This 207-nucleotide RNA was probed chemically with 2A3. The reactions ran in a buffer of 150 mM KOAc, 10 mM MgCl2 and 150 mM bicine (pH 8.5), at 24 C. The 2A3 profile rests on 859 reads. For 2A3 the reverse transcriptase was SuperScript II with manganese.

RNA sequence: GGGAACGACUCGAGUAGAGUCGAAAAACAUGAAGCAUGGUCUGCACUUUGUCACAGGAUCAUCCCUGAGCAAGAGGCCUGUGGGUGAGAAACAGAAGCCCAGCAUCCAAACACAACACUCAGCUUUGUCAGUUGAGAGCCCUCCCUCCUGCCACAAGCAAAUACUGGUUUUCGAACCAGUAUUUGCAAAAGAAACAACAACAACAAC
Reactivity to 2A3 in 0.01 (KOAc 150mM, MgCl2 10mM, bicine 150mM(pH8.5), 24C), signal-to-noise 2, nucleotides 027 to 156: a000c050a040u170g020a080a000g060c000a010u080g000g030u050c020u040g080c100a060c130u090u080u100g180u180c040a010c010a070g030g030a120u090c050a090u080c080c010c020u060g020a110g000c030a080a000g030a010g060g040c000c010u000g000u060g020g010g030u070g010a040g080a060a210a010c020a060g050a090a000g000c020c010c000a000g000c040a030u040c020c030a050a120a050c100a030c060a220a050c030a050c040u020c000a000g000c000u030u120u190g110u200c070a000g020u020u040g000a040g020a040g060c020c000c000u040c010c000c000u010c000c000u000g020c000c040a060c090a120a060